RNA sequence: GGGAACGACUCGAGUAGAGUCGAAAAGAUAUGGAUGGGGAUCCCGAUAAGCGAAUAUGGAGCUCGUGGUCGGAAACGACCACCAGAGCUAUGAAGUAUCGCUUAUCGGGAUCCCCAUCCUAAGUCACUAGUAUUACUGGUUCGCCAGUAAUACUAGAAAAGAAACAACAACAACAAC
Reactivity to DMS in 0.01 (KOAc 150mM, MgCl2 10mM, bicine 150mM(pH8.5), 24C), signal-to-noise 2, nucleotides 027 to 126: g000a070u000a300u010g000g020a020u000g000g000g040g020a010u010c010c000c010g010a010u000a010a000g040c020g000a090a060u000a020u000g000g000a030g010c000u000c010g010u000g010g020u010c000g010g000a150a130a240c020g000a020c000c000a010c010c300a110g020a010g000c010u000a080u010g010a150a240g000u000a010u000c000g020c000u000u000a000u000c000g010g000g000a000u000c010c010c000c010a000u000c010c000u000a000a060g010u010c030a300